[RMDB]
RNA sequence: GGGAACGACUCGAGUAGAGUCGAAAAGAUAUGGACGUGUACUUUUGACGCCUGAAUGUCGGAAACGACAUAGUAGGGCGAUAAGUCACGUCCUAAGUCAAAACGCGUCCUCUUCGGAGGACGCGAAUCCAUAUGUGGUCUUCGGACCACAUAUGGAAAAAGAAACAACAACAACAAC
Reactivity to DMS in 0.01 (KOAc 150mM, MgCl2 10mM, bicine 150mM(pH8.5), 24C), signal-to-noise 2, nucleotides 027 to 126: g000a040u000a300u010g000g000a000c010g010u000g030u020a000c010u000u000u030u030g060a180c050g020c020c010u000g020a150a060u010g000u000c000g030g000a120a090a200c010g000a010c000a030u010a030g000u000a300g000g000g000c000g010a040u000a000a030g000u010c000a000c000g010u000c000c000u010a000a100g010u000c020a070a070a110a170c000g030c010g020u000c000c000u000c000u010u020c180g020g020a000g000g010a000c000g000c000g000a010a030
Reactivity to 2A3 in 0.01 (KOAc 150mM, MgCl2 10mM, bicine 150mM(pH8.5), 24C), signal-to-noise 3, nucleotides 027 to 126: g020a020u050a030u120g000g010a020c000g020u020g030u300a040c100u040u190u180u210g300a190c100g010c010c010u140g080a300a040u140g000u010c000g020g000a070a070a050c020g000a010c000a000u010a020g080u050a020g020g000g000c020g030a020u010a000a000g000u000c000a010c000g000u000c000c000u000a010a000g010u010c010a050a040a060a090c030g000c000g000u000c010c000u010c010u050u060c280g160g000a000g000g000a000c000g010c000g000a000a010